[RMDB]
RNA sequence: GGGAACGACUCGAGUAGAGUCGAAAAAAUUAGAGGCAAUUUGAAAUAAUUUAAAUUAGCUCAACCCUACUGCACAUACCGAACUAGAUAACGGUGUAGUAGGGGUAAAUUCUCCGCAUUCGGUGCGCAACCACCUGAGGUUUCGACCUCAGGUGAACAAAUAGGAUGGUUUCGACCAUCCUAUUUGAAAAGAAACAACAACAACAAC
Reactivity to DMS in 0.01 (KOAc 150mM, MgCl2 10mM, bicine 150mM(pH8.5), 24C), signal-to-noise 2, nucleotides 027 to 156: a080a050u000u000a060g030a100g010g020c000a020a010u000u000u010g000a030a100a180u000a160a220u020u000u000a000a020a040u010u000a160g010c000u000c020a100a030c010c000c010u010a010c000u000g010c000a030c000a150u000a100c010c000g010a080a210c170u010a130g010a150u020a070a150c010g000g040u000g010u000a000g020u000a000g010g020g010g020u000a000a040a080u000u000c020u000c040c040g040c080a200u000u000c080g020g020u000g000c000g000c120a110a120c060c010a020c000c010u000g030a000g000g040u000u000u000c280g010a020c010c020u000c010a020g010g020u000g000a000a050
Reactivity to 2A3 in 0.01 (KOAc 150mM, MgCl2 10mM, bicine 150mM(pH8.5), 24C), signal-to-noise 2, nucleotides 027 to 156: a000a000u130u080a060g030a050g070g030c000a010a020u000u010u040g060a090a120a070u270a120a150u210u080u130a040a060a050u030u040a080g000c000u010c030a010a010c010c000c000u000a000c010u000g010c010a000c000a000u130a030c060c000g060a070a040c060u030a080g080a220u100a290a060c140g030g000u000g000u010a000g000u000a000g000g000g000g000u000a000a000a000u020u010c040u030c030c010g020c020a030u050u090c060g020g000u030g000c010g000c040a050a100c050c000a010c000c010u030g000a010g010g000u060u130u110c140g090a010c000c000u000c010a000g000g000u000g000a000a000

Chemical mapping of a 207-nucleotide RNA with DMS and 2A3. DMS adducts were read by reverse transcription with MarathonRT. The data come from the RNA Mapping Database (RMDB), library M2RFPK. Conditions: 150 mM KOAc, 10 mM MgCl2 and 150 mM bicine (pH 8.5), 24 C. In probing experiments dimethyl sulfate is read out at A N1 and C N3, which are open when not base-paired. Reactivities are given for positions 27 through 156. For DMS, 2,877 sequencing reads were counted.